This 207-nucleotide RNA was probed chemically with 2A3 and DMS. It was measured as part of the RMDB library OK3TST. DMS adducts were read by reverse transcription with MarathonRT.
[RMDB]
RNA sequence: GGGAACGACUCGAGUAGAGUCGAAAAGCAGCCUAGCCAAUCUCAUGAAUAUACUUCACUGAGCUUUAUCCAGCCACAUACUUCCCUUAUUUAAUUCCACAGUGUGGCAGAAAUGAACAUGUUCAUUUACAGACCCAAAGAUAGAGCCUCUUUGUAGGUGGCAUUCAAUAUUCGUAUUGAAUGCCACAAAAGAAACAACAACAACAAC
Reactivity to 2A3 in 0.01 (KOAc 150mM, MgCl2 10mM, bicine 150mM(pH8.5), 24C), signal-to-noise 3, nucleotides 027 to 156: g040c050a000g020c020c020u050a010g020c000c020a080a080u040c030u020c040a070u120g060a170a030u160a030u080a140c050u040u060c040a040c080u020g020a000g020c000u050u030u020a040u030c050c020a010g000c010c020a020c000a030u090a040c050u040u040c000c000c000u000u030a080u050u170u040a100a060u130u040c050c010a080c020a060g060u010g000u020g040g000c000a000g070a010a060a010u070g010a040a020c030a160u160g060u050u050c010a010u030u030u070a070c030a010g040a120c000c030c010a020a080a000g000a020u080a030g030a000g010c040c010u000c030u040u080u050g090u070a070g120
Reactivity to DMS in 0.01 (KOAc 150mM, MgCl2 10mM, bicine 150mM(pH8.5), 24C), signal-to-noise 1, nucleotides 027 to 156: g000c040a100g030c010c030u000a130g000c030c060a090a120u020c000u000c060a080u000g010a110a120u000a100u000a100c040u000u010c000a060c030u000g050a070g000c060u000u000u000a060u010c000c050a160g000c010c020a010c040a060u000a100c090u000u000c010c000c000u000u000a070u010u000u010a130a130u020u000c020c050a150c100a100g010u000g000u000g000g030c020a160g000a010a110a000u010g000a020a060c100a250u000g010u000u020c010a060u010u000u000a100c060a200g020a200c060c050c050a050a070a090g020a100u010a030g000a100g020c020c010u000c040u000u000u010g010u010a150g000

Annotation:
Values cover nucleotides 27 to 156.